[RMDB]
RNA sequence: GGGAACGACUCGAGUAGAGUCGAAAAUAUUAUAGCGCAGUAAAGACGCUGAUCUUUAGUUACCAAGGAACUUUAGUGCUGAGGUCCGAGUUCCAAGGUCCCAUGUCGGACCUUAGCACUAAUUGAAACUUACAAUUGCUUUCGAGCAAUUGUAAGUAAAAGAAACAACAACAACAAC
Reactivity to 2A3 in 0.01 (KOAc 150mM, MgCl2 10mM, bicine 150mM(pH8.5), 24C), signal-to-noise 2, nucleotides 027 to 126: u120a020u110u180a120u140a110g000c010g000c050a020g110u130a040a180a030g070a050c030g020c120u030g030a060u000c000u040u070u040a080g040u130u050a080c020c030a060a040g070g020a090a090c020u040u030u020a000g000u010g020c020u000g010a000g000g010u000c000c000g030a010g050u160u080c040c010a040a010g060g010u010c000c010c000a060u090g050u030c000g020g000a010c000c000u000u000a000g000c000a000c000u000a000a010u000u020g020a030a020
Reactivity to DMS in 0.01 (KOAc 150mM, MgCl2 10mM, bicine 150mM(pH8.5), 24C), signal-to-noise 4, nucleotides 027 to 126: u010a050u010u010a070u000a050g010c030g030c060a120g000u000a080a150a140g010a100c050g010c040u000g010a070u000c060u000u000u000a060g010u000u000a120c050c040a080a140g020g010a100a100c080u000u000u000a000g010u000g010c010u000g010a010g010g000u000c000c000g000a040g010u000u010c240c100a060a050g020g000u000c010c000c000a130u000g010u000c000g000g000a010c000c000u000u000a000g000c010a000c000u000a000a010u000u000g000a100a070
This 177-nucleotide RNA was probed chemically with 2A3 and DMS.
Source: RMDB library M2PK90, as collected in RNAgym.
For DMS the reverse transcriptase was MarathonRT.
2A3 is a SHAPE reagent: it acylates the 2'-hydroxyl of flexible nucleotides of all four kinds.